RNA sequence: GGGAACGACUCGAGUAGAGUCGAAAAUUGGUUAGAACUCCAGUUAAUCCGCCCACCGCAACGGUGUCGGGCGAGGGUCGUCACGCCGGCAACGACCCCUUUCGGCGAAAGCUUCGCCAGGCCUCCCGGAGUACCUGACGUUCGCGUCAGGUACUCCAAAAGAAACAACAACAACAAC
Reactivity to 2A3 in 0.01 (KOAc 150mM, MgCl2 10mM, bicine 150mM(pH8.5), 24C), signal-to-noise 1, nucleotides 027 to 126: u020u020g050g000u070u110a060g070a130a000c060u010c020c000a030g000u010u160a140a020u020c030c020g090c110c010c050a040c000c030g000c060a080a060c070g040g070u120g020u160c100g050g010g000c000g000a020g000g000g000u000c000g000u010c000a010c060g020c040c020g020g030c000a000a000c040g000a010c010c000c000c000u000u040u250c050g010g010c000g000a000a000a140g010c130u020u000c000g030c010c000a010g000g030c000c030u010c030c010c020

An RNA of 177 nucleotides, treated with 2A3 and read out base by base. Conditions: 150 mM KOAc, 10 mM MgCl2 and 150 mM bicine (pH 8.5), 24 C. For 2A3 the reverse transcriptase was SuperScript II with manganese.